[RMDB]
RNA sequence: GGGAACGACUCGAGUAGAGUCGAAAAAAAGAUAUGGAUCCCACUUAGUACGUAUAUGGAGAUCCCUUCGUCGGAAACGACGAAGCGAUCUAUGAAGUAUACGGAACAGUGGGAUCCUAAGUCAAAACAUAUUAUUGGACUUCGGUCCAAUAAUAUGAAAAGAAACAACAACAACAAC
Reactivity to 2A3 in 0.01 (KOAc 150mM, MgCl2 10mM, bicine 150mM(pH8.5), 24C), signal-to-noise 1, nucleotides 027 to 126: a000a000a000g030a000u030a000u060g000g000a000u000c020c020c000a000c000u020u030a010g010u030a000c000g000u000a000u000a010u040g020g010a000g000a010u000c130c000c000u010u020c010g000u000c010g020g020a010a010a030c000g010a000c010g020a000a000g000c000g000a000u000c010u010a300u050g000a010a000g000u010a000u000a010c030g020g010a000a000c020a010g000u000g010g020g000a000u000c000c000u000a000a000g000u000c020a000a000a030a150
Reactivity to DMS in 0.01 (KOAc 150mM, MgCl2 10mM, bicine 150mM(pH8.5), 24C), signal-to-noise 3, nucleotides 027 to 126: a070a090a100g000a020u000a180u000g000g000a010u000c000c000c000a020c000u010u000a110g000u010a100c010g010u000a000u000a010u000g000g000a000g010a010u000c000c120c000u000u000c000g030u010c000g000g000a030a040a070c000g030a020c010g010a010a000g040c300g000a000u000c000u000a230u020g000a110a240g000u000a000u000a020c010g000g010a100a120c230a070g000u000g010g010g010a000u000c000c000u000a010a050g010u000c010a090a070a110a260
The record gives the reactivity of an RNA of 177 nucleotides to 2A3 and DMS. It was measured as part of the RMDB library TTRDES. Values cover nucleotides 27 to 126. For DMS the reverse transcriptase was MarathonRT.